[RMDB]
RNA sequence: GGGAACGACUCGAGUAGAGUCGAAAACUUGUGGCUGGUUAUGAACCCGUGGCACCACAAUAUGGCUACCUUUGAUCAGGCGGAUGCCAUAAGGUGAUUUUAGUUUCAGACCAUCAUCGAAGAACUGCAGACAAUCCUAUUUCGAUAGGAUUGUCUGAAAAGAAACAACAACAACAAC
Reactivity to DMS in 0.01 (KOAc 150mM, MgCl2 10mM, bicine 150mM(pH8.5), 24C), signal-to-noise 5, nucleotides 027 to 126: c060u010u000g030u000g000g010c130u000g000g010u000u000a080u010g010a060a060c050c040c100g010u000g010g010c030a050c050c010a070c120a080a130u000a030u000g010g010c010u000a190c010c000u000u010u000g010a150u010c270a040g010g010c200g020g020a160u010g020c000c000a010u000a030a080g010g020u000g000a070u010u010u000u020a070g000u010u010u000c050a060g010a040c030c030a030u000c030a060u010c120g000a080a060g000a080a090c150u000g010
Reactivity to 2A3 in 0.01 (KOAc 150mM, MgCl2 10mM, bicine 150mM(pH8.5), 24C), signal-to-noise 4, nucleotides 027 to 126: c010u030u060g010u030g100g000c080u030g000g030u070u060a210u220g050a050a030c030c030c040g080u080g100g000c010a010c020c000a030c020a050a090u070a020u020g010g000c000u030a070c020c000u040u050u160g120a120u170c050a030g050g010c070g140g060a080u150g000c010c010a010u020a020a030g000g000u010g020a080u040u040u040u190a050g020u030u010u090c010a020g010a030c010c010a020u030c000a010u070c030g030a020a020g020a140a030c050u130g010
Conditions: 150 mM KOAc, 10 mM MgCl2 and 150 mM bicine (pH 8.5), 24 C.
An RNA of 177 nucleotides, treated with DMS and 2A3 and read out base by base.
Reactivities are given for positions 27 through 126.